[RMDB]
RNA sequence: GGGAACGACUCGAGUAGAGUCGAAAAAUACGGCCGAAGAGAAUAGAGCAUGGGAUGAAGAUCCCGACUACGUCCCGAUUUCACCCGAUGAACACGAACUGUUCAGACGAUGCUUGAGAUUCGGAAACCUUCAACUAACUUUCGAGUUAGUUGAAGGAAAAGAAACAACAACAACAAC
Reactivity to 2A3 in 0.01 (KOAc 150mM, MgCl2 10mM, bicine 150mM(pH8.5), 24C), signal-to-noise 9, nucleotides 027 to 126: a000u120a040c050g050g000c000c010g030a040a030g050a010g050a130a150u150a090g050a010g040c020a040u080g010g000g020a020u020g050a050a030g060a100u020c010c000c000g010a030c010u080a030c030g040u020c020c000c000g020a030u050u090u100c070a080c010c020c010g050a050u040g010a020a000c020a000c090g070a200a060c070u030g020u020u010c000a000g030a030c020g020a030u030g000c020u030u040g050a090g010a160u060u030c010g020g000a050a030a040
Reactivity to DMS in 0.01 (KOAc 150mM, MgCl2 10mM, bicine 150mM(pH8.5), 24C), signal-to-noise 7, nucleotides 027 to 126: a090u020a080c130g000g010c020c010g010a040a030g010a100g020a120a090u030a110g000a040g020c010a050u020g000g010g010a040u000g000a140a100g000a050u000c010c000c010g000a160c020u000a070c080g000u000c010c010c020g020a080u030u020u030c070a060c050c010c000g010a180u010g030a010a030c020a030c190g010a130a300c090u000g000u000u000c000a040g000a270c260g000a090u010g000c030u000u010g000a080g000a160u010u000c020g000g000a100a130a120